[RMDB]
RNA sequence: GGGAACGACUCGAGUAGAGUCGAAAAUGUCCCAGUUUCGACUGGGACAAAAGCAUGAGGAGGAUCAAAGAUCAAAGCCGUCGCUCAUGGGUAAAGACGGCAAAAGGCUAGUGUUCGCACUAGCCAAACCGUUUAGUUUGUUCGCAAACUAAACGGUAAAAGAAACAACAACAACAAC
Reactivity to 2A3 in 0.01 (KOAc 150mM, MgCl2 10mM, bicine 150mM(pH8.5), 24C), signal-to-noise 1, nucleotides 027 to 126: u050g000u000c030c010c000a010g000u060u040u050c230g090a020c000u000g000g010g020a010c020a010a060a000a010g030c030a030u070g010a020g050g060a020g020g080a050u070c050a140a170a130g040a020u080c060a060a110a000g020c000c000g010u000c000g000c020u020c030a030u100g090g000g000u020a060a040a020g020a000c000g000g020c000a000a020a000a010g000g010c000u000a000g020u010g050u060u080c250g050c010a000c000u000a010g000c010c000a010a030
Reactivity to DMS in 0.01 (KOAc 150mM, MgCl2 10mM, bicine 150mM(pH8.5), 24C), signal-to-noise 2, nucleotides 027 to 126: u000g010u000c000c000c000a010g000u010u000u020c180g010a050c020u010g000g010g000a000c010a000a000a030a130g020c070a010u000g000a010g030g030a140g040g050a100u000c060a040a130a130g030a110u000c030a060a130a150g000c000c010g040u000c040g000c030u000c030a110u010g000g020g000u000a110a060a140g000a300c010g000g020c030a040a000a020a100g010g000c000u000a000g020u030g040u000u000c160g030c000a010c000u000a000g000c000c000a020a030